[RMDB]
The record gives the reactivity of an RNA of 207 nucleotides to DMS and 2A3. The DMS profile rests on 1,750 reads. High 2A3 reactivity points to a flexible backbone, as in loops and unpaired stretches. The RNA was probed in 150 mM KOAc, 10 mM MgCl2 and 150 mM bicine (pH 8.5) at 24 C.
RNA sequence: GGGAACGACUCGAGUAGAGUCGAAAAAUGGCGAAUGCAUGGGGAACUACAUCUGUGUCGCGAGUUCGAUUCUCGCCAGGGCGUGGUCCUGUAGCUCAGUUGGUAGAGCAAGCUGUUCCCCGGACACAAAAUCCAGCUAGGUUCGCCUAGCUGGAAACCAUUGUUCCGUCUUCGGACGGAACAAUGGAAAAGAAACAACAACAACAAC
Reactivity to DMS in 0.01 (KOAc 150mM, MgCl2 10mM, bicine 150mM(pH8.5), 24C), signal-to-noise 1, nucleotides 027 to 156: a090u010g020g000c030g090a200a030u000g040c000a080u030g000g040g010g000a010a010c000u010a030c020a030u010c070u010g040u000g000u000c010g040c010g020a020g010u000u020c000g020a300u000u000c000u000c010g030c030c000a100g010g010g020c040g030u010g070g030u000c000c000u000g010u000a110g000c000u000c010a090g000u000u000g030g020u000a070g000a070g040c030a160a110g000c020u000g000u000u000c000c000c000c020g000g000a100c110a080c020a040a040a100a090u000c000c000a000g020c010u030a010g010g000u010u000c290g040c000c000u000a010g010c010u000g000g000a000a010a100
Reactivity to 2A3 in 0.01 (KOAc 150mM, MgCl2 10mM, bicine 150mM(pH8.5), 24C), signal-to-noise 2, nucleotides 027 to 156: a000u090g050g050c050g110a120a010u110g070c070a050u090g000g000g000g010a030a000c030u080a040c120a130u170c040u040g100u080g010u120c010g000c010g000a000g010u010u000c010g010a000u010u000c000u000c010g020c000c000a000g000g000g000c160g090u230g060g050u050c000c000u000g010u010a000g000c000u000c000a000g030u140u140g150g090u200a010g010a000g010c030a030a010g030c060u000g010u010u020c000c000c000c000g060g000a040c040a000c020a040a120a000a020u000c000c000a010g010c000u000a010g000g050u010u010c200g060c070c000u000a000g020c000u010g000g000a000a000a010